[RMDB]
RNA sequence: GGGAACGACUCGAGUAGAGUCGAAAAGAUAUGGAUCCAGUAGCGUUCUUUGAUCUCGGAAACGAGGGAGAACCAGCUACGGAUCCUAAGUCAAACAGAUCUCCCCAGUUCGCUGGGGAGAUCUGAACGAUGAAUCCCUGUUCGCAGGGAUUCAUCGAAAAGAAACAACAACAACAAC
Reactivity to DMS in 0.01 (KOAc 150mM, MgCl2 10mM, bicine 150mM(pH8.5), 24C), signal-to-noise 1, nucleotides 027 to 126: g000a010u000a300u000g000g000a000u000c000c010a090g080u000a000g020c000g000u000u010c010u020u000u000g030a160u000c000u010c000g020g000a120a050a220c020g010a050g000g000g010a030g010a040a010c220c220a130g000c000u000a000c030g030g010a000u000c000c000u000a000a000g000u010c010a130a130a300c020a010g020a030u010c000u000c000c000c000c010a000g050u000u000c220g000c030u000g050g000g000g030a000g000a000u000c000u000g000a020a070